Source: RMDB library OK1LIB, as collected in RNAgym. Structure probing data (DMS and 2A3) for a 177-nucleotide construct. The 2A3 profile rests on 959 reads.
RNA sequence: GGGAACGACUCGAGUAGAGUCGAAAAGUCCUCGAGCUUACAGCUUAGUGUAGCGAUGAGGAAUACUUCUCUGUAUGUGCCCAAUGCUGCUUCGAGAAGCAGUGGAUCAUUAUUACGCCAAGUUGCAACUCACUUAGUCCUUCGGGACUAAGUGAGUAAAAGAAACAACAACAACAAC
Reactivity to DMS in 0.01 (KOAc 150mM, MgCl2 10mM, bicine 150mM(pH8.5), 24C), signal-to-noise 2, nucleotides 027 to 126: g000u000c030c000u010c000g000a160g070c020u030u040a030c020a010g000c230u020u020a030g000u000g000u000a000g000c000g000a300u000g010a040g000g000a100a050u000a170c090u020u010c000u000c000u010g000u020a050u010g000u010g000c110c020c020a080a140u060g010c020u000g030c000u010u000c230g020a120g000a050a030g040c070a000g040u030g000g000a140u000c010a030u030u030a200u010u040a090c180g000c030c090a070a050g000u030u000g010c040a040
Reactivity to 2A3 in 0.01 (KOAc 150mM, MgCl2 10mM, bicine 150mM(pH8.5), 24C), signal-to-noise 3, nucleotides 027 to 126: g010u000c000c000u000c010g000a000g000c100u240u200a020c010a030g140c000u140u270a110g020u110g010u060a030g000c070g110a180u200g000a040g060g050a000a000u040a000c060u140u000c030u000c010u080g070u040a150u130g100u080g020c000c000c040a040a060u180g010c000u000g060c000u110u010c130g090a170g040a120a000g000c000a000g000u060g010g000a040u090c090a070u080u090a200u190u030a030c120g040c070c030a140a050g020u140u030g100c040a000
The RNA was probed in 150 mM KOAc, 10 mM MgCl2 and 150 mM bicine (pH 8.5) at 24 C.